About this RNA
The record gives the reactivity of an RNA of 177 nucleotides to DMS and 2A3. The reactions ran in a buffer of 150 mM KOAc, 10 mM MgCl2 and 150 mM bicine (pH 8.5), at 24 C.
RNA sequence: GGGAACGACUCGAGUAGAGUCGAAAAGAUAUGGACACUCUCACCGAUGCCGAAGAACUCGGAAACGAGGGAGGCGCGGUGAGGAGUGUCCUAAGUCAAAAUCGUGACACGUUCGCGUGUCACGAAACUUCUUCUCACGGUUCGCCGUGAGAAGAAGAAAAGAAACAACAACAACAAC
Reactivity to DMS in 0.01 (KOAc 150mM, MgCl2 10mM, bicine 150mM(pH8.5), 24C), signal-to-noise 1, nucleotides 027 to 126: g000a010u010a300u030g010g000a020c000a030c000u010c000u000c000a030c010c000g020a080u010g110c020c010g040a030a210g000a100a260c000u000c050g000g030a110a130a180c010g020a010g010g000g050a060g030g000c000g010c030g010g000u000g000a030g000g000a000g010u000g010u000c000c020u000a020a010g010u030c010a080a060a100a140u000c010g010u000g010a020c010a000c010g010u000u030c260g050c010g000u000g000u000c010a000c000g000a010a070a030
Reactivity to 2A3 in 0.01 (KOAc 150mM, MgCl2 10mM, bicine 150mM(pH8.5), 24C), signal-to-noise 1, nucleotides 027 to 126: g020a050u050a040u160g000g000a000c000a020c020u030c000u020c020a000c010c000g150a150u170g000c040c000g090a280a080g010a020a000c020u010c000g000g030a110a060a050c030g030a000g040g030g050a020g050g070c010g000c020g000g000u040g000a020g000g000a000g020u000g010u000c000c000u000a020a000g030u000c010a000a010a000a300u020c010g000u000g000a000c010a000c030g030u080u090c300g020c030g080u000g000u030c000a000c000g010a030a010a010